The data come from the RNA Mapping Database (RMDB), library OK2TST. This 177-nucleotide RNA was probed chemically with 2A3 and DMS. The RNA was probed in 150 mM KOAc, 10 mM MgCl2 and 150 mM bicine (pH 8.5) at 24 C. The 2A3 profile rests on 2,539 reads. DMS (dimethyl sulfate) methylates the pairing face of unpaired adenines and cytosines. 2A3 is a SHAPE reagent: it acylates the 2'-hydroxyl of flexible nucleotides of all four kinds.
[RMDB]
RNA sequence: GGGAACGACUCGAGUAGAGUCGAAAAAUCGCAACAAUGACACCAUUAAUUGCCUUAACCGGACGAUAUUUUUUGAGUGCCUUUAAUAUCCCGGUCCACUCAGUCUGAUUAUCUUUGCUGUCAUCAAUAAAUAAAUGCAGUUCGCUGCAUUUAUUUAAAAAGAAACAACAACAACAAC
Reactivity to 2A3 in 0.01 (KOAc 150mM, MgCl2 10mM, bicine 150mM(pH8.5), 24C), signal-to-noise 2, nucleotides 027 to 126: a010u070c040g020c040a020a060c020a070a100u070g040a050c010a010c040c000a010u010u140a060a050u090u120g050c000c000u060u060a020a040c000c000g050g000a050c040g020a010u000a050u080u140u040u050u070u070g090a120g060u050g020c000c000u060u090u030a070a080u090a060u070c010c010c030g000g000u030c030c000a020c020u030c030a020g020u030c020u070g030a060u050u060a040u070c050u010u080u080g010c010u000g060u020c000a030u050c010a070a100
Reactivity to DMS in 0.01 (KOAc 150mM, MgCl2 10mM, bicine 150mM(pH8.5), 24C), signal-to-noise 5, nucleotides 027 to 126: a090u010c070g010c060a080a060c150a080a050u000g000a070c070a050c100c030a040u010u020a060a090u000u000g010c060c020u000u000a080a080c100c060g010g000a070c090g010a050u000a000u000u000u010u000u000u010g000a080g020u000g010c060c020u000u010u010a070a080u010a100u000c020c020c020g020g010u000c090c040a040c060u000c050a040g010u000c040u000g010a070u000u000a040u000c070u000u000u000g000c080u000g020u000c050a070u000c090a040a160